[RMDB]
RNA sequence: GGGAACGACUCGAGUAGAGUCGAAAAGAACUCGAAGAAGCACAGUUCGCUCCUUCGCGGCAGUUUCCUUCUGUCGCUGCAGAGGGACAGCUGCAGAGAGGGUGAAUCGCGCCGCGAGGUGUCAGGAGACGUAUCACGCAUUCGUGCGUGAUACGUCAAAAGAAACAACAACAACAAC
Reactivity to DMS in 0.01 (KOAc 150mM, MgCl2 10mM, bicine 150mM(pH8.5), 24C), signal-to-noise 1, nucleotides 027 to 126: g020a000a100c070u000c030g100a140a150g010a070a080g000c020a030c090a100g030u010u000c070g000c000u000c000c010u020u020c000g020c030g000g010c000a090g000u000u050u000c010c010u000u000c010u000g000u010c290g030c060u010g000c050a060g000a040g070g080g000a170c180a030g000c000u000g040c010a040g000a070g000a070g000g000g000u000g020a020a070u070c140g000c060g000c000c000g020c050g010a060g060g000u000g010u000c120a060g010g050a300
Reactivity to 2A3 in 0.01 (KOAc 150mM, MgCl2 10mM, bicine 150mM(pH8.5), 24C), signal-to-noise 3, nucleotides 027 to 126: g040a000a010c040u010c070g050a150a030g050a120a020g070c100a130c030a090g030u070u060c030g050c010u000c000c000u080u070c020g010c050g030g010c030a030g000u000u020u020c030c000u000u020c000u030g110u080c110g050c190u130g000c040a020g080a150g170g090g060a050c020a000g000c000u030g000c000a010g040a000g020a030g020g020g000u110g070a020a060u060c020g010c030g000c090c000g000c020g000a000g040g030u050g020u040c090a030g060g100a100